[RMDB]
RNA sequence: GGGAACGACUCGAGUAGAGUCGAAAAGAUAUGGAAUCUUUGAGAGGUGGUGUUCCCUCGGAAACGAGCACACCACUACCCACCUCACAGAUUCCUAAGUCAAAAUCCGUCUCUUCGGAGACGGAAACCAACGUAGAUAGUUCGCUAUCUACGUUGGAAAAGAAACAACAACAACAAC
Reactivity to DMS in 0.01 (KOAc 150mM, MgCl2 10mM, bicine 150mM(pH8.5), 24C), signal-to-noise 5, nucleotides 027 to 126: g000a030u000a300u010g000g000a010a000u000c000u010u000u000g000a010g000a110g010g000u000g010g000u000g020u000u000c170c220c000u000c010g010g000a080a120a160c010g000a010g050c230a010c010a010c020c000a010c010u000a020c070c090c110a300c120c000u000c010a010c050a020g000a020u000u000c000c000u000a010a060g010u010c010a100a070a110a090u000c000c000g010u000c000u000c010u000u000c200g010g010a010g000a010c000g000g000a000a030a120
Reactivity to 2A3 in 0.01 (KOAc 150mM, MgCl2 10mM, bicine 150mM(pH8.5), 24C), signal-to-noise 4, nucleotides 027 to 126: g010a020u060a030u130g000g000a000a000u000c000u010u030u010g010a000g010a020g070g000u020g030g000u010g010u040u110c070c020c000u010c010g010g030a070a060a030c010g000a000g030c130a000c000a000c010c010a000c000u010a020c030c020c000a040c010c000u000c000a020c000a010g010a000u010u000c000c000u040a150a020g050u020c030a020a010a020a300u010c000c000g000u000c010u000c000u030u090c300g160g000a000g000a000c000g000g000a010a000a000
Chemical mapping of a 177-nucleotide RNA with DMS and 2A3. The reactions ran in a buffer of 150 mM KOAc, 10 mM MgCl2 and 150 mM bicine (pH 8.5), at 24 C. Source: RMDB library TTRDEL, as collected in RNAgym.